[RMDB]
RNA sequence: GGGAACGACUCGAGUAGAGUCGAAAAGAAGUUGUGAAACUUCCAAGAAUAGAAUAGUUUAGUUAAGUCUAGUUUAGUUUUUGUGUUGAAGGGCUUCUACCUCAGAGGAGGAUUUAGAAGCCCUUUCCCAACGAAAGAAUUUCGAUUCUUUCGUUGGAAAAGAAACAACAACAACAAC
Reactivity to DMS in 0.01 (KOAc 150mM, MgCl2 10mM, bicine 150mM(pH8.5), 24C), signal-to-noise 4, nucleotides 027 to 126: g000a020a030g010u000u000g010u040g010a150a030a030c010u000u010c010c080a090a110g010a090a080u020a110g000a080a060u000a080g000u000u010u010a080g010u010u020a070a100g000u000c010u000a040g000u010u000u010a160g010u000u000u000u000u000g000u010g000u010u000g010a050a030g010g010g010c000u000u000c000u000a040c010c000u010c020a170g020a170g030g010a010g000g000a190u030u010u010a010g010a000a000g000c000c000c000u000u000u000c060